[RMDB]
RNA sequence: GGGAACGACUCGAGUAGAGUCGAAAAGAAUCUUCCGCAAUGGGCGCAAGCCUGACGGAGCAAUGCCGCGUGCGGGAUGAAGCGUCUUGACGUGUAAACCGCUGUCAGGGGGUCGAACCAAUGAUUGCUACCCUCAUAUCUUCGGAUAUGAGGGUAGAAAAGAAACAACAACAACAAC
Reactivity to DMS in 0.01 (KOAc 150mM, MgCl2 10mM, bicine 150mM(pH8.5), 24C), signal-to-noise 2, nucleotides 027 to 126: g000a160a190u000c090u010u000c010c020g000c080a110a090u010g010g000g000c000g060c180a110a140g000c010c020u000g000a100c030g000g020a040g100c220a090a110u020g010c050c020g030c080g000u000g010c000g070g000g000a030u030g000a250a300g000c000g000u010c040u000u010g000a020c020g000u000g000u010a020a300a250c050c000g000c000u000g030u010c030a180g020g000g000g020g000u010c040g010a050a250c030c010a080a060u000g000a160u010u000g030
Reactivity to 2A3 in 0.01 (KOAc 150mM, MgCl2 10mM, bicine 150mM(pH8.5), 24C), signal-to-noise 2, nucleotides 027 to 126: g150a010a050u000c060u100u000c060c030g000c070a140a160u130g050g010g000c020g000c050a030a060g000c000c000u000g020a020c030g010g000a030g100c020a020a180u160g030c000c010g020c060g110u060g000c030g000g090g000a070u300g000a010a000g000c000g030u000c010u130u190g090a050c050g040u030g000u090a030a020a020c030c000g010c050u060g080u060c060a120g000g010g020g000g050u040c000g020a020a030c000c010a040a070u210g180a110u110u210g030